[RMDB]
An RNA of 207 nucleotides, treated with 2A3 and DMS and read out base by base.
For DMS the reverse transcriptase was MarathonRT.
For DMS, 9,887 sequencing reads were counted.
The data come from the RNA Mapping Database (RMDB), library OK3TST.
The 2A3 profile rests on 4,467 reads.
2A3 is a SHAPE reagent: it acylates the 2'-hydroxyl of flexible nucleotides of all four kinds.
The reactions ran in a buffer of 150 mM KOAc, 10 mM MgCl2 and 150 mM bicine (pH 8.5), at 24 C.
RNA sequence: GGGAACGACUCGAGUAGAGUCGAAAAUGGGCUGUCAUCUCAUGAUGUAGACUUGAAGCAAAGCACUUGUCCUGUUGGGGUGCCCUCCCCCACCAGGAAUGUUCGUUUAUCCUCCCUAAGCCACAGGAAAGACAGUUCAGGCACCUGAGGUAGGAAAAAUCAUUAAAUAGUUCGCUAUUUAAUGAUUAAAAGAAACAACAACAACAAC
Reactivity to 2A3 in 0.01 (KOAc 150mM, MgCl2 10mM, bicine 150mM(pH8.5), 24C), signal-to-noise 5, nucleotides 027 to 156: u040g000g010g000c030u040g070u140c040a150u010c050u040c060a060u140g070a060u100g080u130a050g050a140c040u040u090g070a060a010g060c060a080a060a020g020c030a060c120u110u110g050u060c000c000u000g010u000u010g000g000g000g010u070g030c000c000c010u050c010c000c000c000c000a010c010c000a010g010g000a010a010u040g010u040u060c090g020u020u080u090a110u110c020c020u030c030c020c000u030a060a040g020c020c000a030c020a020g030g030a050a060a030g040a030c030a010g000u040u150c020a010g010g010c010a040c020c020u020g020a030g030g000u060a020g010g000a050a040a030
Reactivity to DMS in 0.01 (KOAc 150mM, MgCl2 10mM, bicine 150mM(pH8.5), 24C), signal-to-noise 4, nucleotides 027 to 156: u010g010g010g010c020u010g030u000c030a170u000c040u000c050a140u000g010a140u010g010u000a130g030a070c040u010u030g010a300a110g030c050a070a060a110g000c070a050c050u010u010g020u000c010c000u010g020u000u000g010g020g010g010u000g010c090c040c020u000c080c020c000c010c010a030c030c000a020g020g030a040a010u000g010u010u000c090g010u000u000u020a110u020c020c020u000c020c000c040u000a070a110g030c020c040a100c070a150g010g010a070a070a120g010a050c020a070g020u000u000c020a100g020g000c060a110c040c020u000g010a040g010g030u000a070g020g000a030a060a110